[RMDB]
RNA sequence: GGGAACGACUCGAGUAGAGUCGAAAAGGGGUCAUCCGUUUGACGAGAGCGACAUGCGAAUGUAGCUGAAGCCUCCACGGCUAGAUUCGCAACAGCGCUCUCCGAGGAUGACGGAGGCACCCAAACGAGCAAGUGUAGUUCGCUACACUUGCUCGAACCUAUAAUGCAAGUUCGCUUGCAUUAUAGGAAAAGAAACAACAACAACAAC
Reactivity to 2A3 in 0.01 (KOAc 150mM, MgCl2 10mM, bicine 150mM(pH8.5), 24C), signal-to-noise 9, nucleotides 027 to 156: g100g010g040g020u000c000a010u000c000c000g010u110u150u160g020a010c000g000a000g000a000g010c010g120a180c140a240u300g000c000g000a020a000u170g020u210a000g000c000u020g010a110a010g010c000c000u000c000c010a030c010g000g000c000u020a030g010a170u000u000c010g000c030a160a120c080a120g010c000g000c000u000c000u000c000c000g000a000g000g000a000u000g000a000c000g000g000a000g000g000c000a030c000c010c000a030a080a010c020g010a000g010c000a000a000g000u000g000u000a010g010u050u090c180g010c090u000a000c000a000c000u000u000g000c000u000c000g000a000a000
Reactivity to DMS in 0.01 (KOAc 150mM, MgCl2 10mM, bicine 150mM(pH8.5), 24C), signal-to-noise 2, nucleotides 027 to 156: g020g000g010g020u030c020a030u000c010c010g010u000u000u000g010a110c190g000a050g020a030g010c010g010a060c050a220u020g040c040g010a020a010u000g010u000a020g020c000u000g000a030a120g000c020c020u000c010c030a230c040g000g000c010u000a010g000a050u000u000c010g010c000a080a090c150a080g000c020g020c030u000c000u000c000c000g000a100g030g010a040u010g010a060c020g000g000a060g050g060c000a070c010c020c010a070a150a190c000g000a020g030c010a000a020g030u000g010u000a030g010u000u010c270g050c000u000a020c000a010c000u000u000g010c010u010c000g010a010a090